[RMDB]
The record gives the reactivity of an RNA of 177 nucleotides to 2A3 and DMS. High DMS reactivity at an A or C suggests that its Watson-Crick edge is free. For 2A3, 3,418 sequencing reads were counted.
RNA sequence: GGGAACGACUCGAGUAGAGUCGAAAAAAAAAGGACAACGAAAUCGGCCUCUGCAACCUCCACCUGGUGUUGUCUGGGAACCUGAUCAAAACUACCGAGUUUGAUCAGGCCAAUGCAGAGAAAAAAACAUUAACCAUAUCUUCGGAUAUGGUUAAUGAAAAGAAACAACAACAACAAC
Reactivity to 2A3 in 0.01 (KOAc 150mM, MgCl2 10mM, bicine 150mM(pH8.5), 24C), signal-to-noise 2, nucleotides 027 to 126: a000a010a000a010a010g030g000a020c020a040a020c050g080a070a030a150u230c090g060g020c000c010u010c010u000g000c000a020a050c000c010u000c020c010a070c020c030u030g010g030u030g030u050u000g010u020c000u020g000g000g010a040a090c000c010u000g000a010u000c020a010a030a020a120c020u120a140c030c120g080a070g140u000u020u000g000a010u000c000a000g000g000c030c010a000a000u020g000c000a000g000a020g000a190a040a010a000a000a000a000
Reactivity to DMS in 0.01 (KOAc 150mM, MgCl2 10mM, bicine 150mM(pH8.5), 24C), signal-to-noise 4, nucleotides 027 to 126: a040a040a030a050a080g030g000a030c020a020a010c010g020a060a120a090u010c130g000g000c160c010u000c010u000g000c010a040a060c040c010u000c040c050a270c080c050u010g000g010u010g020u000u000g020u000c010u000g020g000g010a090a300c000c000u000g000a000u000c000a000a010a010a030c030u000a170c300c200g000a090g010u000u000u000g000a010u000c000a000g010g000c030c020a030a040u010g020c010a020g000a040g030a010a000a030a050a030a030a130
The RNA was probed in 150 mM KOAc, 10 mM MgCl2 and 150 mM bicine (pH 8.5) at 24 C.